RNA sequence: GGGAACGACUCGAGUAGAGUCGAAAAUACAAGUACGAAAGUACAAGCCUUAUCAGUUGGGCCUUCUGGUCAAAUUAGCGCUCACCCAGGAGGUCCUUCGCAUGAGGUCGACAAGCGCUAUAAGAAACAGGCAGAUAGAGUUCGCUCUAUCUGCCUGAAAAGAAACAACAACAACAAC
Reactivity to DMS in 0.01 (KOAc 150mM, MgCl2 10mM, bicine 150mM(pH8.5), 24C), signal-to-noise 1, nucleotides 027 to 126: u000a020c130a160a090g010u020a020c000g050a110a080a130g010u000a000c000a140a270g000c000c010u000u000a000u010c100a070g000u000u000g020g000g010c010c000u020u000c030u000g010g000u020c050a020a060a120u000u000a040g000c010g000c040u000c110a290c270c000c000a010g010g000a000g040g020u000c000c000u000u010c060g000c140a090u000g000a010g060g020u000c060g030a000c160a020a000g010c000g000c000u000a030u000a030a210g000a050a040a050

An RNA of 177 nucleotides, treated with DMS and read out base by base.
The DMS profile rests on 683 reads.
Source: RMDB library M2PK90, as collected in RNAgym.
The reactions ran in a buffer of 150 mM KOAc, 10 mM MgCl2 and 150 mM bicine (pH 8.5), at 24 C.